RNA sequence: GGGAACGACUCGAGUAGAGUCGAAAAGCAAGUAGUCGACAAUUUCAGCACUGGCGCUGGCUUUGCCAUCACUGUUUGACAGACGUUUAGCCAGCAUAUCGGCACGCAUUUUGACCAAGCCAUUAAGAACCACUUCUACGUUCGCGUAGAAGUGGUUAAAAGAAACAACAACAACAAC
Reactivity to 2A3 in 0.01 (KOAc 150mM, MgCl2 10mM, bicine 150mM(pH8.5), 24C), signal-to-noise 2, nucleotides 027 to 126: g040c060a050a080g040u080a050g000u090c050g000a050c100a110a040u040u100u120c100a100g000c040a040c080u050g050g000c060g000c020u010g020g000c010u070u000u030g050c030c010a070u120c040a020c020u060g080u100u210u280g160a040c020a020g000a010c000g020u030u050u000a000g000c000c000a000g010c000a020u060a060u140c000g030g000c020a000c030g000c030a060u000u070u090u220g050a030c000c000a040a010g020c020c000a080u120u080a060a050g090
Reactivity to DMS in 0.01 (KOAc 150mM, MgCl2 10mM, bicine 150mM(pH8.5), 24C), signal-to-noise 2, nucleotides 027 to 126: g030c090a140a110g020u010a080g030u000c040g020a030c130a050a070u000u000u000c060a020g020c060a070c130u010g010g010c080g000c010u000g010g000c020u010u000u010g010c030c060a080u010c170a080c080u020g010u000u030u020g000a090c030a010g010a090c300g020u000u010u010a050g040c010c010a010g020c000a080u000a010u010c070g030g020c020a080c050g010c040a050u000u000u000u000g010a090c020c030a110a170g000c030c030a050u010u010a070a110g000

The record gives the reactivity of an RNA of 177 nucleotides to 2A3 and DMS. Reactivities are given for positions 27 through 126. It was measured as part of the RMDB library OK2TST. DMS adducts were read by reverse transcription with MarathonRT. The reactions ran in a buffer of 150 mM KOAc, 10 mM MgCl2 and 150 mM bicine (pH 8.5), at 24 C.